[RMDB]
RNA sequence: GGGAACGACUCGAGUAGAGUCGAAAAUAUGGGUGCCAUGGAGGAGUCCAAGGCAUUCAGGUUGGCUAAGGAGGGAUGAACCGGGCCAGGGGUGAAAACCAGCAGCCAAGAGUUCCCGUGGUAGGCAGUAGAGGGAUAGCGUACCGGAGUGAACUGCGAUGCCAAAUAAGUUCGCUUAUUUGGCAUCAAAAGAAACAACAACAACAAC
Reactivity to 2A3 in 0.01 (KOAc 150mM, MgCl2 10mM, bicine 150mM(pH8.5), 24C), signal-to-noise 1, nucleotides 027 to 156: u190a040u000g000g010g000u020g000c020c010a020u040g000g010a040g080g090a060g090u010c040c010a060a100g000g000c000a000u000u000c010a000g010g010u070u030g020g000c060u100a060a070g020g020a030g000g080g020a000u020g040a090a030c030c020g020g010g000c030c030a020g020g000g000g000u020g030a000a050a000a020c000c000a010g030c060a020g020c040c050a050a040g060a000g040u000u010c000c000c020g010u010g000g010u020a040g040g000c060a060g020u080a010g030a050g000g010g000a020u010a000g020c010g000u010a040c040c000g020g030a040g010u060g040a020a010c000u030g040c020